[RMDB]
RNA sequence: GGGAACGACUCGAGUAGAGUCGAAAAUGGAGAUGCCAUGCCGACCCGAAGAGGAAAGAAGGACGCGAGACGCAAACCUGUGAGUGGACACCCGCUUUAUUCACUGGGGACGACAACUCUGGGGAGACAAAAUAACUUACUUCGGUAAGUUAUUUUGAAAAGAAACAACAACAACAAC
Reactivity to 2A3 in 0.01 (KOAc 150mM, MgCl2 10mM, bicine 150mM(pH8.5), 24C), signal-to-noise 3, nucleotides 027 to 126: u110g020g000a120g020a080u120g100c020c000a040u060g030c000c020g050a070c000c000c040g020a070a020g040a020g040g030a060a070a040g040a050a030g030g020a010c020g050c040g060a080g020a030c030g000c070a050a060a100c020c010u040g030u060g050a030g030u060g020g020a020c010a040c050c020c000g030c050u090u150u100a150u100u080c060a040c080u060g000g000g010g020a020c040g010a020c020a080a040c010u010c020u050g030g000g000g000a060g000a020
Reactivity to DMS in 0.01 (KOAc 150mM, MgCl2 10mM, bicine 150mM(pH8.5), 24C), signal-to-noise 6, nucleotides 027 to 126: u010g000g020a090g000a100u000g020c070c020a050u000g010c040c030g010a110c050c020c030g020a060a080g010a100g010g010a060a060a080g010a100a080g000g000a070c100g030c070g000a060g010a090c060g010c080a070a080a140c050c040u000g020u000g010a040g020u000g000g000a070c130a140c080c060c080g010c130u000u000u000a050u000u010c070a040c040u000g000g000g000g000a130c070g000a070c090a040a090c050u000c060u000g010g000g000g000a120g010a190

Structure probing data (2A3 and DMS) for a 177-nucleotide construct. For DMS, 5,780 sequencing reads were counted.